Notes: Source: RMDB library OK3TST, as collected in RNAgym. Structure probing data (2A3) for a 207-nucleotide construct. Reactivities are given for positions 27 through 156. The RNA was probed in 150 mM KOAc, 10 mM MgCl2 and 150 mM bicine (pH 8.5) at 24 C.
[RMDB]
RNA sequence: GGGAACGACUCGAGUAGAGUCGAAAAAGCCGGCCAUAGUGAUGCGGGGCUGUGGUCCCAGUUACUCGGGAGGCUGAGGUGGAGGAUCACCUGAGUUCAGGAGGUCGAGGCCACAGUGAACUGUGAUUGCGCCACUGCACUCCACACUGGGCAGCAGUCGAUUAGUGCGAUUCGUCGCACUAAUCGAAAAAGAAACAACAACAACAAC
Reactivity to 2A3 in 0.01 (KOAc 150mM, MgCl2 10mM, bicine 150mM(pH8.5), 24C), signal-to-noise 1, nucleotides 027 to 156: a000g050c010c000g060g000c030c000a180u090a080g060u120g120a090u030g030c080g010g020g030g000c070u090g020u000g010g030u240c050c050c020a010g020u040u060a090c010u010c080g120g010g020a060g060g000c050u090g020a060g040g010u030g070g040a090g090g010a010u040c000a020c020c030u050g100a100g070u090u140c000a010g010g010a020g060g000u030c050g070a150g020g070c000c000a060c000a030g040u040g070a030a010c010u040g020u020g000a030u000u080g060c040g000c020c000a020c050u010g000c050a170c130u030c030c000a000c000a000c030u010g000g000g070c000a210g000c000a020g040